[RMDB]
Chemical mapping of a 177-nucleotide RNA with 2A3 and DMS.
Source: RMDB library OK2TST, as collected in RNAgym.
2A3 adducts were read by reverse transcription with SuperScript II with manganese.

RNA sequence: GGGAACGACUCGAGUAGAGUCGAAAACUGACGUUGCGGUGCUGGACACGACGACGGGCGCACUGAUCGACGUCGUAGACGUUUCCCAGGCGCCGGGCACCACCACGCAAUGCGUGCGGAUGAGCCCGCUACGGAACUUGUUCGCAAGUUCCGUAGCAAAAGAAACAACAACAACAAC
Reactivity to 2A3 in 0.01 (KOAc 150mM, MgCl2 10mM, bicine 150mM(pH8.5), 24C), signal-to-noise 2, nucleotides 027 to 126: c030u030g060a020c020g030u050u080g030c000g050g020u030g040c000u090g060g050a040c040a020c220g180a040c030g060a060c030g110g000g110c010g040c000a170c130u050g010a180u110c010g000a000c000g010u010c000g000u020a100g030a050c040g000u010u030u020c000c000c000a020g030g040c010g000c000c000g000g010g010c050a060c070c010a000c000c000a020c030g000c040a150a170u290g000c010g040u040g030c110g000g040a090u110g040a070g020c000c010c000
Reactivity to DMS in 0.01 (KOAc 150mM, MgCl2 10mM, bicine 150mM(pH8.5), 24C), signal-to-noise 3, nucleotides 027 to 126: c060u000g010a060c040g040u000u000g000c050g000g030u010g000c070u000g020g020a190c060a100c140g020a120c120g010a120c050g000g010g000c080g000c020a060c040u010g010a110u000c060g000a010c000g000u000c000g030u000a040g020a150c060g010u000u000u000c080c060c030a190g020g010c030g020c060c010g020g010g020c020a100c050c020a080c130c010a010c000g010c020a130a060u000g000c040g050u010g010c130g000g030a120u000g000a300g000c020c000c020
The RNA was probed in 150 mM KOAc, 10 mM MgCl2 and 150 mM bicine (pH 8.5) at 24 C.